[RMDB]
RNA sequence: GGGAACGACUCGAGUAGAGUCGAAAAGAUAUGGACCAUGGUUAGCUAGCUCCACUCAUCGGAAACGAUGAAGAAGAGCUUGGACCUAACCCGCUGGUCCUAAGUCAAAGCCUCGUUCGCGAGGCAAGGUCCAAAUAAUGUUCGCAUUAUUUGGACCAAAAGAAACAACAACAACAAC
Reactivity to 2A3 in 0.01 (KOAc 150mM, MgCl2 10mM, bicine 150mM(pH8.5), 24C), signal-to-noise 2, nucleotides 027 to 126: g040a030u090a050u190g000g000a000c000c030a040u160g000g010u000u010a020g040c030u020a000g000c000u010c000c040a030c030u010c000a000u000c010g010g000a080a030a050c000g010a010u030g010a040a030g010a090a010g010a010g000c010u020u070g020g050a040c030c000u000a000a000c010c000c020g020c010u020g000g000u010c000c000u000a060a000g030u000c040a130a080a060g010c010c000u010c020g030u080u090c300g010c000g090a010g000g000c000a000a020
Reactivity to DMS in 0.01 (KOAc 150mM, MgCl2 10mM, bicine 150mM(pH8.5), 24C), signal-to-noise 4, nucleotides 027 to 126: g010a040u010a300u020g000g010a010c010c000a020u000g000g010u000u000a020g000c030u000a010g000c020u000c000c010a300c250u000c000a010u000c000g000g000a120a110a200c020g010a000u000g000a010a030g000a190a290g000a020g000c000u020u000g030g020a100c300c020u000a010a010c010c000c030g000c000u000g000g010u000c000c010u000a000a050g010u000c050a110a130a160g000c000c000u000c010g000u000u010c290g050c000g020a000g020g010c030a000a030